This 177-nucleotide RNA was probed chemically with DMS and 2A3. The reactions ran in a buffer of 150 mM KOAc, 10 mM MgCl2 and 150 mM bicine (pH 8.5), at 24 C. For 2A3 the reverse transcriptase was SuperScript II with manganese. Reactivities are given for positions 27 through 126. The DMS profile rests on 30,462 reads. It was measured as part of the RMDB library TTRDES.

RNA sequence: GGGAACGACUCGAGUAGAGUCGAAAAGAUAUGGACGAUGUAGCGACAUGCUGUAGAGUCUCGGAAACGAGACGAUCAGCAACAGCGCUACCGCUCGUCCUAAGUCAAACGCUUCUUCGGAAGCGAACUAAUAAUGUGAGUUCGCUCACAUUAUUAGAAAAGAAACAACAACAACAAC
Reactivity to DMS in 0.01 (KOAc 150mM, MgCl2 10mM, bicine 150mM(pH8.5), 24C), signal-to-noise 9, nucleotides 027 to 126: g000a050u010a300u010g000g010a020c000g020a010u010g000u000a010g000c000g000a070c140a300u000g010c000u000g010u020a030g010a300g000u000c000u000c000g010g000a100a120a260c000g010a010g010a010c010g000a140u000c010a010g000c000a020a060c300a190g010c010g000c000u000a000c000c020g000c020u000c000g010u000c000c000u000a010a080g010u000c040a120a100a260c030g010c000u000u000c000u000u010c150g020g000a020a010g010c000g000a030a140
Reactivity to 2A3 in 0.01 (KOAc 150mM, MgCl2 10mM, bicine 150mM(pH8.5), 24C), signal-to-noise 9, nucleotides 027 to 126: g050a030u110a050u190g000g000a000c010g000a020u300g010u010a000g000c000g160a210c060a140u090g000c000u030g070u180a080g030a030g120u000c000u000c000g010g020a090a100a050c020g000a000g000a000c010g020a090u040c000a000g000c010a020a030c080a040g060c000g000c000u000a000c000c000g010c000u000c010g000u000c000c000u010a100a020g040u010c040a080a050a140c020g000c000u010u000c000u050u060c300g160g000a000a000g000c000g000a040a000